Structure probing data (DMS and 2A3) for a 207-nucleotide construct.
For 2A3 the reverse transcriptase was SuperScript II with manganese.
The DMS profile rests on 3,140 reads.
The reactions ran in a buffer of 150 mM KOAc, 10 mM MgCl2 and 150 mM bicine (pH 8.5), at 24 C.
[RMDB]
RNA sequence: GGGAACGACUCGAGUAGAGUCGAAAAGAAACGCAAGGCCGCUGACCGACGGGAUAUUGUGGGGCUUACCACAGGGGACGCGGCGUAAUCACUUGCCUUUUAAGCCGACCGUCUGGGCUGCAUACAAACCACCCAACUAUCUUCGGAUAGUUGGGAAGACUCAUACAUACUUCGGUAUGUAUGAGUCAAAAGAAACAACAACAACAAC
Reactivity to DMS in 0.01 (KOAc 150mM, MgCl2 10mM, bicine 150mM(pH8.5), 24C), signal-to-noise 2, nucleotides 027 to 156: g050a090a090a080c050g000c010a050a070g000g030c040c010g030c040u000g010a250c000c010g000a190c060g020g000g020a080u000a050u020u000g030u000g030g020g050g010c200u000u020a150c010c020a060c060a110g040g010g010g000a180c120g040c010g000g030c110g030u000a030a040u000c100a140c000u000u000g010c040c070u000u000u000u000a060a050g010c040c020g000a050c050c020g030u000c020u000g000g030g030c000u020g020c040a150u000a070c030a060a100a140c020c040a070c020c000c000a010a040c000u000a010u000c010u000u010c290g040g000a020u010a000g010u000u020g000g000g050a000a010
Reactivity to 2A3 in 0.01 (KOAc 150mM, MgCl2 10mM, bicine 150mM(pH8.5), 24C), signal-to-noise 3, nucleotides 027 to 156: g010a010a030a000c110g000c020a010a010g140g000c000c000g000c020u060g060a040c020c020g020a030c010g040g030g110a140u110a130u280u070g000u040g000g020g080g120c120u130u140a070c000c010a020c040a060g010g010g000g040a000c030g000c020g010g000c000g000u040a010a000u060c020a010c060u010u020g010c000c010u060u150u060u120a050a020g000c000c010g040a080c020c010g030u020c020u070g050g050g000c010u030g000c020a080u140a140c040a010a040a050c010c020a030c020c010c000a000a010c000u000a000u010c000u000u010c050g070g000a010u000a000g000u000u000g000g010g000a000a000